[RMDB]
RNA sequence: GGGAACGACUCGAGUAGAGUCGAAAAUUACAGAUCUUAAAUGCACAUCUGUGGUUCUCCUCUCUGUGCUCCAACAGUUACACUUAGAGGCUAAUAGUAGGGCCUGGGCUUUCUGUGUUAAAUGCCAGUAGUUUACAGAGUUCGCUCUGUAAACUACAAAAGAAACAACAACAACAAC
Reactivity to 2A3 in 0.01 (KOAc 150mM, MgCl2 10mM, bicine 150mM(pH8.5), 24C), signal-to-noise 2, nucleotides 027 to 126: u050u040a010c000a030g040a050u020c020u150u200a190a190a180u220g010c060a050c000a070u000c030u010g000u000g000g000u040u020c040u000c030c000u000c010u000c000u000g030u060g050c020u040c040c000a030a040c000a070g020u040u070a020c030a030c010u070u050a010g030a040g140g040c010u020a050a070u050a200g140u030a030g050g000g090c000c030u030g070g000g000c000u080u120u010c060u070g090u000g000u020u110a100a140a010u030g020c020c010a000
Reactivity to DMS in 0.01 (KOAc 150mM, MgCl2 10mM, bicine 150mM(pH8.5), 24C), signal-to-noise 2, nucleotides 027 to 126: u000u000a060c020a040g000a000u000c050u000u010a060a130a160u010g020c210a080c240a030u000c020u010g010u000g000g000u000u000c060u000c010c030u010c060u000c020u010g000u010g040c020u010c050c060a050a100c120a050g000u020u000a060c090a060c060u010u010a100g000a050g010g020c100u010a050a050u000a100g000u000a060g010g000g000c040c030u010g010g010g010c050u010u000u000c040u020g010u000g000u000u000a030a040a120u010g000c040c040a160